[RMDB]
RNA sequence: GGGAACGACUCGAGUAGAGUCGAAAAACCUGCAUGAAUGGUAGAACGAGGUCCCCACUGUCCCUAGCUAGAACUUAGUGAACCUGCUAUUCUGGUGCACAAGCCAGAGUCUUCCAUUGGGAAGCGAGUCGAUCUAAUUGUUCGCAAUUAGAUCGACAAAAGAAACAACAACAACAAC
Reactivity to DMS in 0.01 (KOAc 150mM, MgCl2 10mM, bicine 150mM(pH8.5), 24C), signal-to-noise 1, nucleotides 027 to 126: a090c020c000u010g010c080a100u010g030a050a010u000g000g030u000a090g010a080a130c120g030a110g000g000u000c010c050c010c040a040c080u000g030u010c010c010c040u000a080g030c050u000a060g010a060a090c150u010u010a050g030u000g000a070a070c040c010u010g000c050u000a090u010u010c010u000g000g010u010g000c190a050c300a120a150g000c010c020a020g000a060g010u010c000u000u000c010c000a250u000u020g010g010g030a070a030g020c200g000a070

An RNA of 177 nucleotides, treated with DMS and read out base by base. Source: RMDB library RFMREP, as collected in RNAgym. The RNA was probed in 150 mM KOAc, 10 mM MgCl2 and 150 mM bicine (pH 8.5) at 24 C. For DMS the reverse transcriptase was MarathonRT.